[RMDB]
RNA sequence: GGGAACGACUCGAGUAGAGUCGAAAAAUCACAUUCUCAUCGAAAGGUGGAAAGAAGAAAAACUCGAGCCAGCCUGGAACGACCCUACCUUGUGUUGCUAACCACCAAGACUGCUGUUCGUACAGCAGCGAAGUAGUAAAUUCGUUUACUACUUCGCAAAAGAAACAACAACAACAAC
Reactivity to 2A3 in 0.01 (KOAc 150mM, MgCl2 10mM, bicine 150mM(pH8.5), 24C), signal-to-noise 7, nucleotides 027 to 126: a000u070c020a020c010a070u060u010c060u030c030a090u060c030g080a080a050a070g020g000u030g010g040a110a080a050g080a060a030g070a020a110a020a040a020c020u030c030g010a010g020c000c020a010g000c000c020u030g020g030a090a030c030g060a030c030c000c000u010a030c020c020u060u050g040u010g030u090u040g020c020u040a080a040c010c010a010c000c020a040a030g100a060c030u030g000c000u010g030u070u100c060g130u230a020c010a010g010c000a000
Reactivity to DMS in 0.01 (KOAc 150mM, MgCl2 10mM, bicine 150mM(pH8.5), 24C), signal-to-noise 9, nucleotides 027 to 126: a070u010c080a090c110a190u000u000c010u000c030a060u010c050g000a100a100a120g010g020u000g000g010a050a070a080g010a100a110g010a060a060a060a120a080c060u000c030g010a080g000c030c020a080g010c030c010u000g010g010a070a080c060g000a080c030c020c020u000a060c070c030u000u000g010u000g010u000u000g010c070u010a070a150c050c030a070c100c090a060a090g000a140c100u000g010c000u000g010u000u010c220g010u010a110c020a010g010c010a040
Chemical mapping of a 177-nucleotide RNA with 2A3 and DMS. Values cover nucleotides 27 to 126. Conditions: 150 mM KOAc, 10 mM MgCl2 and 150 mM bicine (pH 8.5), 24 C. For 2A3 the reverse transcriptase was SuperScript II with manganese. It was measured as part of the RMDB library OK2TRN. For 2A3, 15,760 sequencing reads were counted.